[RMDB]
RNA sequence: GGGAACGACUCGAGUAGAGUCGAAAAGAUAUGGACCUGACCCAGCCGCCCUUCAACAGCUCGGAAACGAGACAUGAAGUAACAAGCUGCAGGUCCUAAGUCAAAUCAUCUAGUUCGCUAGAUGAAACACGUUACAAGCGUUCGCGCUUGUAACGUGAAAAGAAACAACAACAACAAC
Reactivity to DMS in 0.01 (KOAc 150mM, MgCl2 10mM, bicine 150mM(pH8.5), 24C), signal-to-noise 2, nucleotides 027 to 126: g020a060u000a300u000g050g000a020c000c000u010g000a190c300c300c030a030g040c040c000g000c300c150c000u000u000c000a000a080c300a120g000c010u000c000g000g000a060a110a140c020g000a000g000a000c220a100u000g000a000a000g000u000a090a100c130a100a100g000c000u000g040c020a010g020g020u000c000c010u010a000a120g000u000c040a090a110a170u010c000a000u000c000u000a020g020u010u000c190g000c000u000a000g000a000u000g000a020a040a100
Reactivity to 2A3 in 0.01 (KOAc 150mM, MgCl2 10mM, bicine 150mM(pH8.5), 24C), signal-to-noise 1, nucleotides 027 to 126: g000a020u000a000u070g000g000a000c020c010u040g140a130c110c010c060a010g020c000c010g010c120c110c030u110u000c030a070a070c010a200g110c000u000c010g010g030a010a070a040c000g030a020g000a030c020a130u060g000a030a000g000u120a200a130c280a140a000g020c010u030g020c000a000g010g030u000c010c000u010a050a000g020u030c010a020a080a170u030c010a000u000c000u000a020g020u110u040c270g000c110u030a000g000a000u050g010a050a050a000